Notes
The record gives the reactivity of an RNA of 177 nucleotides to 2A3 and DMS.
[RMDB]
RNA sequence: GGGAACGACUCGAGUAGAGUCGAAAAACAAAGAGAUCGAAAGAGCAAUGUGUAACUCAUCAUCCUAGCGAAUGGUUGCGCUCGAAAGAUCGAGUGUUACCAUCACAUCCCGGACGCUAGAAAAAAAGGUUAUAUGUUUGUUCGCAAACAUAUAACCAAAAGAAACAACAACAACAAC
Reactivity to 2A3 in 0.01 (KOAc 150mM, MgCl2 10mM, bicine 150mM(pH8.5), 24C), signal-to-noise 3, nucleotides 027 to 126: a000c040a010a100a010g130a020g000a070u090c080g050a070a100a080g030a000g010c050a050a080u130g040u010g020u090a070a030c020u000c040a050u010c000a030u020c050c000u000a000g010c010g060a080a020u030g020g000u010u010g000c000g010c000u000c000g120a140a210a150g210a250u070c010g000a010g000u000g000u000u020a010c000c000a000u030c030a020c010a060u030c000c010c000g010g020a020c010g010c020u020a030g000a110a010a020a000a000a010a020
Reactivity to DMS in 0.01 (KOAc 150mM, MgCl2 10mM, bicine 150mM(pH8.5), 24C), signal-to-noise 4, nucleotides 027 to 126: a100c120a090a090a080g000a140g000a060u000c050g020a060a080a100g020a040g010c060a040a070u010g020u000g000u010a090a080c060u010c020a080u000c080a070u000c060c010u010a030g000c020g000a170a010u000g000g000u000u000g010c000g010c000u000c010g030a060a130a060g010a120u000c000g000a010g010u000g000u000u000a010c000c000a010u000c140a060c130a100u000c030c000c020g010g010a170c040g010c010u000a030g010a000a010a040a070a030a070a070
For 2A3, 6,883 sequencing reads were counted. The data come from the RNA Mapping Database (RMDB), library M2PK90. Conditions: 150 mM KOAc, 10 mM MgCl2 and 150 mM bicine (pH 8.5), 24 C.